[RMDB]
RNA sequence: GGGAACGACUCGAGUAGAGUCGAAAAUGGGCGGAAGAUUCUUCUGACACUUCUAGCCUAUUCAGCUUCGCGUCCUUGAGGCCUGGCGUAACGCGGCUCUUGCCACCAGGAUGCCUCCGCUAGUCGAGCGGACUUGGUCUCUUCCCCCCAAAGCCCUGUAUCCCUAAAACUUCGGUUUUAGGGAUACAAAAGAAACAACAACAACAAC
Reactivity to 2A3 in 0.01 (KOAc 150mM, MgCl2 10mM, bicine 150mM(pH8.5), 24C), signal-to-noise 3, nucleotides 027 to 156: u020g000g020g000c020g020g020a020a020g010a110u140u040c050u200u070c120u230g100a120c060a020c110u040u040c020u060a070g010c010c000u010a030u020u070c050a020g020c060u100u110c090g020c010g090u060c010c040u020u090g020a020g010g020c000c010u020g040g000c010g070u150a160a050c180g010c010g140g050c030u060c030u080u080g040c030c030a060c030c020a030g050g030a090u080g010c010c020u030c000c010g000c000u060a090g160u200c160g070a030g010c000g010g000a010c020u070u130g030g000u010c020u010c000u060u040c000c000c000c000c000c020a040a030a010g040c010c010c020u010
Description: The record gives the reactivity of an RNA of 207 nucleotides to 2A3. The 2A3 profile rests on 1,901 reads. The data come from the RNA Mapping Database (RMDB), library VIROID. The reactions ran in a buffer of 150 mM KOAc, 10 mM MgCl2 and 150 mM bicine (pH 8.5), at 24 C.